[RMDB]
RNA sequence: GGGAACGACUCGAGUAGAGUCGAAAACGCACGGCGAACGACCACCUCUCGGUGGAGUUCAUCUACGAAGCCCACCAUCUUGCAGAGGGUUGCCUCACCGAUACCAGGAGCGACGGCAACAACAAUAGCCUAGAAUCUGCUUCGGCAGAUUCUAGGCAAAAGAAACAACAACAACAAC
Reactivity to 2A3 in 0.01 (KOAc 150mM, MgCl2 10mM, bicine 150mM(pH8.5), 24C), signal-to-noise 2, nucleotides 027 to 126: c020g020c110a060c060g050g000c000g030a000a040c020g240a300c000c040a010c010c000u110c080u100c180g000g000u000g030g000a020g000u000u000c000a010u120c060u100a070c120g010a090a030g110c000c000c000a010c000c040a050u050c030u140u180g020c010a040g070a110g080g070g000u030u030g000c000c010u030c000a060c030c000g070a050u130a210c010c090a100g000g020a020g090c140g000a050c070g010g020c000a050a000c000a000a000c070a030a200u250a120
Conditions: 150 mM KOAc, 10 mM MgCl2 and 150 mM bicine (pH 8.5), 24 C.
An RNA of 177 nucleotides, treated with 2A3 and read out base by base.
For 2A3 the reverse transcriptase was SuperScript II with manganese.
Values cover nucleotides 27 to 126.
For 2A3, 716 sequencing reads were counted.